[RMDB]
RNA sequence: GGGAACGACUCGAGUAGAGUCGAAAAGCAACUUAGGAUUUUAGGCUCACCGUGCGUGUCUCGAACCAUGCCGGGCCAAACCCACGGGGGCUGGCGGUCCCCGUGCGGUCAAAAUCAAACCGCUGGAAAAACAGUUCUAGCUUCGGCUAGAACUGAACUAAGUAGGAGUGUUCGCACUCCUACUUAGAAAAGAAACAACAACAACAAC
Reactivity to 2A3 in 0.01 (KOAc 150mM, MgCl2 10mM, bicine 150mM(pH8.5), 24C), signal-to-noise 5, nucleotides 027 to 156: g030c020a020a130c080u170u220a130g080g070a180u140u090u060u170a050g020g000c030u050c080a100c040c050g050u130g050c030g020u070g040u040c080u070c250g070a060a040c030c010a020u040g010c020c010g010g010g000c000c000a060a040a020c000c000c000a000c000g000g000g000g000g000c000u010g000g000c000g000g000u000c000c000c010c000g000u000g000c040g000g000u030c010a060a070a020a110u100c030a100a080a100c010c000g020c030u040g040g020a070a100a020a010a010c010a000g000u000u000c000u000a000g010c000u040u070c220g040g000c000u000a000g000a000a000c000u000g000a000a010
Reactivity to DMS in 0.01 (KOAc 150mM, MgCl2 10mM, bicine 150mM(pH8.5), 24C), signal-to-noise 2, nucleotides 027 to 156: g000c030a010a080c050u020u010a080g040g010a100u000u000u020u000a140g020g000c030u000c030a140c090c070g050u000g010c070g040u000g050u010c060u020c170g000a150a190c110c030a030u010g040c000c040g000g030g040c050c030a060a110a090c040c010c000a060c050g020g000g040g020g040c010u000g020g030c120g060g020u000c000c000c000c000g030u010g000c050g020g020u010c080a050a080a080a170u010c050a070a070a050c060c030g030c010u000g020g000a050a060a090a130a190c020a010g020u010u000c000u000a010g010c000u000u000c300g030g000c000u030a010g000a000a010c000u000g010a010a090